Description
Source: RMDB library OK1LIB, as collected in RNAgym. An RNA of 177 nucleotides, treated with DMS and 2A3 and read out base by base. Conditions: 150 mM KOAc, 10 mM MgCl2 and 150 mM bicine (pH 8.5), 24 C.
RNA sequence: GGGAACGACUCGAGUAGAGUCGAAAAGAUGUCACUCAUGCCAUUAAAAGAUCAACGCAUUAUGGCAACAGUUAUUUAGACGGACAUAGAGUCCAUAAUGCAUUUGUAAAUAGAAACUAUACUGUGACAGCGGCUAGUAUUUCGAUACUAGCCGCUGAAAAGAAACAACAACAACAAC
Reactivity to DMS in 0.01 (KOAc 150mM, MgCl2 10mM, bicine 150mM(pH8.5), 24C), signal-to-noise 1, nucleotides 027 to 126: g000a160u000g000u000c000a030c030u000c140a110u020g000c020c100a300u070u000a190a170a040a070g000a230u000c020a020a090c300g000c000a000u000u000a000u000g000g000c070a190a190c050a000g000u000u000a300u100u030u000a170g000a000c200g020g000a030c120a100u000a050g000a280g000u000c000c000a000u000a000a000u000g030c000a190u000u000u000g100u000a070a080a070u140a300g050a100a020a000c000u000a160u000a070c190u070g000u070g000a020
Reactivity to 2A3 in 0.01 (KOAc 150mM, MgCl2 10mM, bicine 150mM(pH8.5), 24C), signal-to-noise 1, nucleotides 027 to 126: g030a000u090g080u040c000a060c000u070c000a050u260g000c000c000a120u200u220a000a000a050a110g090a180u210c000a050a050c030g060c000a000u070u070a000u000g000g000c000a000a000c000a000g000u000u000a140u070u160u060a150g040a110c110g300g000a000c000a000u230a000g260a000g150u050c000c000a000u000a000a000u000g000c000a000u200u270u070g000u100a090a140a030u140a050g060a000a000a000c000u000a000u010a200c120u040g000u000g100a050